Structure probing data (DMS and 2A3) for a 207-nucleotide construct. In probing experiments dimethyl sulfate is read out at A N1 and C N3, which are open when not base-paired. For 2A3 the reverse transcriptase was SuperScript II with manganese. The reactions ran in a buffer of 150 mM KOAc, 10 mM MgCl2 and 150 mM bicine (pH 8.5), at 24 C. Values cover nucleotides 27 to 156. For DMS, 2,755 sequencing reads were counted. For 2A3, 1,850 sequencing reads were counted.
RNA sequence: GGGAACGACUCGAGUAGAGUCGAAAACGUGGCAAUAACUGUCUCCUUCACAAUAAACGGAAUAUACUAAGAAUAAUGAAUGAUUUUACGCCACCAAAAAAUCAUUUCGGAAGGUUCAAGAGGGUCGAUUUUAUAAGCACAAACUACCCUCCAAAGAUCAUACGCUAAUGUUCGCAUUAGCGUAUGAAAAAGAAACAACAACAACAAC
Reactivity to DMS in 0.01 (KOAc 150mM, MgCl2 10mM, bicine 150mM(pH8.5), 24C), signal-to-noise 2, nucleotides 027 to 156: c080g040u010g020g010c010a130a110u020a070a130c080u020g010u000c000u020c020c030u020u010c070a200c100a060a150u000a070a080a200c110g000g010a080a080u010a170u010a130c090u000a070a080g000a090a180u000a160a150u030g000a030a030u000g000a030u020u000u000u000a170c080g010c020c030a060c030c010a000a080a020a080a010a000u000c010a020u000u010u000c100g010g000a010a070g010g010u000u000c040a070a070g000a080g020g030g040u000c060g040a220u000u000u010u000a130u010a080a090g020c060a100c030a040a050a020c060u000a070c000c000c010u000c010c000a130a050a080g030a150
Reactivity to 2A3 in 0.01 (KOAc 150mM, MgCl2 10mM, bicine 150mM(pH8.5), 24C), signal-to-noise 4, nucleotides 027 to 156: c070g030u040g010g000c020a070a170u080a260a140c090u070g070u030c050u060c050c000u180u190c050a060c050a170a240u280a150a120a030c090g060g030a140a020u170a060u110a160c070u170a240a080g030a150a160u220a120a070u170g020a010a010u010g010a000u000u000u000u100a100c130g040c010c000a050c040c040a000a260a050a050a030a000u010c020a010u110u080u080c020g050g060a060a050g050g000u070u120c070a100a050g020a010g010g000g000u020c040g070a070u010u030u040u080a200u030a070a050g010c020a020c070a130a050a000c000u010a010c010c010c000u010c040c000a070a030a000g070a040